Background:
Chemical mapping of a 177-nucleotide RNA with 2A3 and DMS. Reactivities are given for positions 27 through 126. For 2A3 the reverse transcriptase was SuperScript II with manganese. High DMS reactivity at an A or C suggests that its Watson-Crick edge is free.
[RMDB]
RNA sequence: GGGAACGACUCGAGUAGAGUCGAAAAGGAACGGUAGAAAAGAGCGAGCCUCUCGAUACGAAAGGGCCGCGAGCCUAUCGAGUUUGGAGUCAUCCGGGCCGAAGGGUUGAGACGCACCCACAGACGGGACAUAGUUGUACUUCGGUACAACUAUGUCAAAAGAAACAACAACAACAAC
Reactivity to 2A3 in 0.01 (KOAc 150mM, MgCl2 10mM, bicine 150mM(pH8.5), 24C), signal-to-noise 1, nucleotides 027 to 126: g030g000a140a000c030g000g030u100a080g070a060a090a060a020g040a050g010c030g020a020g030c030c000u060c010u010c010g020a030u110a300c050g020a050a040a070g010g010g050c000c010g000c060g020a020g000c000c020u010a060u020c020g000a060g040u010u100u120g060g000a050g010u080c030a070u000c050c050g020g010g010c000c000g030a060a040g050g010g020u040u040g010a010g000a050c030g010c000a050c000c020c000a010c010a050g060a010c040g040g070
Reactivity to DMS in 0.01 (KOAc 150mM, MgCl2 10mM, bicine 150mM(pH8.5), 24C), signal-to-noise 2, nucleotides 027 to 126: g000g000a050a050c030g030g020u010a040g010a100a060a080a150g000a240g010c050g010a110g020c070c020u010c020u010c000g000a170u000a090c100g000a030a070a060g010g000g010c020c010g020c100g000a120g000c010c020u000a040u000c010g010a090g050u000u000u000g000g010a090g020u000c130a100u010c030c070g010g000g000c040c010g010a100a300g000g000g000u010u000g000a070g000a110c040g000c090a100c010c000c000a040c120a080g000a070c150g010g000